Structure probing data (2A3 and DMS) for a 177-nucleotide construct. The RNA was probed in 150 mM KOAc, 10 mM MgCl2 and 150 mM bicine (pH 8.5) at 24 C. DMS adducts were read by reverse transcription with MarathonRT.
RNA sequence: GGGAACGACUCGAGUAGAGUCGAAAACAUAUGUCGGAGAGUGGAACACUCAGCGGAAACGCAUCCAAUGUCUGAAGUCUUUAAUGGGUAUAACAGUCAGUUGACCCAGAUCCCAACAGACAAUAAAAGUAUACAUGUUCUUCGGAACAUGUAUACUAAAAGAAACAACAACAACAAC
Reactivity to 2A3 in 0.01 (KOAc 150mM, MgCl2 10mM, bicine 150mM(pH8.5), 24C), signal-to-noise 5, nucleotides 027 to 126: c020a030u190a120u280g140u170c070g030g010a040g000a000g090u070g050g230a150a030c020a000c060u020c020a010g000c020g030g040a060a040a020c020g010c000a010u000c010c020a100a100u050g010u010c010u000g050a070a030g010u000c040u040u050u040a070a050u030g000g050g010u050a140u040a300a030c010a030g270u200c030a040g000u110u010g030a010c000c000c000a000g000a010u010c000c010c010a010a040c010a000g020a010c010a020a000u180a020a090a000
Reactivity to DMS in 0.01 (KOAc 150mM, MgCl2 10mM, bicine 150mM(pH8.5), 24C), signal-to-noise 5, nucleotides 027 to 126: c060a090u000a060u010g010u000c090g030g000a090g000a040g020u000g000g010a090a120c070a030c020u000c050a100g010c050g010g000a080a060a070c040g020c030a300u010c050c070a070a100u010g010u000c000u000g000a120a100g000u000c040u000u000u000a240a220u000g000g000g010u000a070u010a000a020c010a150g010u020c250a100g020u010u000g000a020c000c000c000a020g000a110u000c010c000c000a060a170c040a020g010a020c010a050a070u010a040a060a050